[RMDB]
RNA sequence: GGGAACGACUCGAGUAGAGUCGAAAAUGCGUAUAGCAGUUUUAGGAGCGGGAUACGCCGGGCUUUCUGUAACUUGGCAUUUACUACUGCAUUCUCAAGGAACAGCAACUAUUGAUCUUUUUGAUCCGACCGUCUAUAACUUCGGUUAUAGACGGUCAAAAGAAACAACAACAACAAC
Reactivity to 2A3 in 0.01 (KOAc 150mM, MgCl2 10mM, bicine 150mM(pH8.5), 24C), signal-to-noise 2, nucleotides 027 to 126: u040g000c000g040u160a010u140a270g030c000a020g030u000u000u110u160a110g030g010a020g050c030g050g130g010a100u140a120c120g020c030c000g020g110g030c060u080u150u090c040u100g020u030a000a060c010u060u070g070g010c010a010u100u010u110a040c030u020a010c030u010g040c050a040u070u050c010u010c060a030a070g090g000a050a010c020a030g100c040a040a050c010u180a160u150u140g000a020u000c010u000u140u160u080u250g020a010u000c040c070
Reactivity to DMS in 0.01 (KOAc 150mM, MgCl2 10mM, bicine 150mM(pH8.5), 24C), signal-to-noise 1, nucleotides 027 to 126: u000g020c010g010u020a140u000a220g020c020a050g000u000u000u010u030a070g000g010a100g050c050g030g020g000a080u000a060c100g000c020c050g030g000g000c120u000u000u000c080u020g010u010a040a080c070u010u010g000g030c020a050u000u000u000a120c100u000a050c080u010g010c050a080u000u010c000u000c040a090a120g000g010a030a060c060a070g010c090a050a080c110u000a080u020u010g010a060u000c000u000u000u000u010u000g020a000u010c020c300